[RMDB]
The data come from the RNA Mapping Database (RMDB), library M2RFPK. Structure probing data (2A3) for a 207-nucleotide construct. For 2A3 the reverse transcriptase was SuperScript II with manganese.

RNA sequence: GGGAACGACUCGAGUAGAGUCGAAAAUAGCGAAGUAGGAUUUUAUGCGUCAAGUGUUCACAGGCUGGGGAGUCGCCGUGAAACGAAAAGCAGAAAGCGUGCUGCUUACGAUAUAAAUUCCGCACCCAUAAGAAGUCUCUGUUCGCAGAGACUUCAAUCAACCUUCCGAGUUCGCUCGGAAGGUUGAAAAAGAAACAACAACAACAAC
Reactivity to 2A3 in 0.01 (KOAc 150mM, MgCl2 10mM, bicine 150mM(pH8.5), 24C), signal-to-noise 1, nucleotides 027 to 156: u160a020g030c040g050a110a020g050u160a110g030g000a020u020u040u010u020a040u110g010c000g000u030c090a090a050g050u020g020u220u010c040a040c090a110g000g000c060u080g020g000g080g040a080g060u090c040g000c000c000g000u010g000a030a030a030c000g030a060a030a030a000g010c030a010g000a080a180a040g160c160g110u120g070c030u000g000c000u020u010a000c000g020a000u000a000u020a090a060a000u040u020c020c060g000c000a020c000c010c000a020u130a140a100g000a000a000g000u000c000u000c000u000g060u050u120c200g060c070a010g000a000g000a000c000u000u000c000a000a010
About this RNA:
Conditions: 150 mM KOAc, 10 mM MgCl2 and 150 mM bicine (pH 8.5), 24 C.